About this RNA: This 177-nucleotide RNA was probed chemically with 2A3 and DMS. The reactions ran in a buffer of 150 mM KOAc, 10 mM MgCl2 and 150 mM bicine (pH 8.5), at 24 C.

[RMDB]
RNA sequence: GGGAACGACUCGAGUAGAGUCGAAAAAUUGACUUUCUGAAGAUAUGCAACAGCCACAUGCCUAUUAAGCUCAGGUUGACAUAUGACUUUCCGGUGUGAAUAUUGCAGAGCACAUGUUUGUGUGUUCCAGUGCGUACCGAUUCGUCGGUACGCACUGAAAAGAAACAACAACAACAAC
Reactivity to 2A3 in 0.01 (KOAc 150mM, MgCl2 10mM, bicine 150mM(pH8.5), 24C), signal-to-noise 1, nucleotides 027 to 126: a040u070u080g080a040c020u000u110u180c010u130g060a000a030g020a030u080a030u180g020c020a120a060c020a080g000c000c020a040c040a010u040g000c100c030u130a130u300u250a060a010g040c040u010c070a000g090g000u040u000g060a040c040a060u130a030u060g070a120c020u000u030u050c040c010g080g010u140g000u040g080a140a040u150a110u060u140g070c000a000g010a000g000c000a010c010a010u040g150u280u220u140g070u050g000u000g000u000u010c010
Reactivity to DMS in 0.01 (KOAc 150mM, MgCl2 10mM, bicine 150mM(pH8.5), 24C), signal-to-noise 1, nucleotides 027 to 126: a110u000u000g000a060c100u000u000u000c010u000g010a090a090g030a080u030a030u000g030c020a030a050c060a080g000c020c030a060c120a050u020g000c050c010u020a170u000u000a060a110g000c080u000c090a030g010g010u000u000g000a170c050a040u010a060u000g000a110c090u010u000u000c070c020g020g010u000g000u030g000a060a070u000a050u000u000g000c040a130g020a020g000c020a000c000a040u000g040u000u000u010g020u000g030u000g000u000u000c020